Chemical mapping of a 177-nucleotide RNA with 2A3. It was measured as part of the RMDB library RFM100. The RNA was probed in 150 mM KOAc, 10 mM MgCl2 and 150 mM bicine (pH 8.5) at 24 C.
[RMDB]
RNA sequence: GGGAACGACUCGAGUAGAGUCGAAAAACUAGGGCUGACUGUAGCUGGGGGAAGACAGUUUACUCAUUUGCUCUCUCCUUUCAUACAGUCAGCUGGUCCCUCUCCUCAGGUGUAGACCACCUAUUAUCUUCAAAGAUGACUUCGGUCAUCUUUGAAGAAAAGAAACAACAACAACAAC
Reactivity to 2A3 in 0.01 (KOAc 150mM, MgCl2 10mM, bicine 150mM(pH8.5), 24C), signal-to-noise 2, nucleotides 027 to 126: a000c160u180a160g090g090g000c000u000g000a010c010u000g000u000a000g000c040u040g010g000g000g020g030a160a000g010a010c050a020g030u070u220u150a210c130u160c070a150u040u110u170g020c000u010c000u000c020u010c020c000u010u020u000c100a200u000a010c000a000g000u000c000a000g010c010u000g000g000u000c000c040c000u000c000u040c010c000u110c070a020g000g030u010g020u050a090g090a110c020c000a000c010c000u020a140u070u060a080u000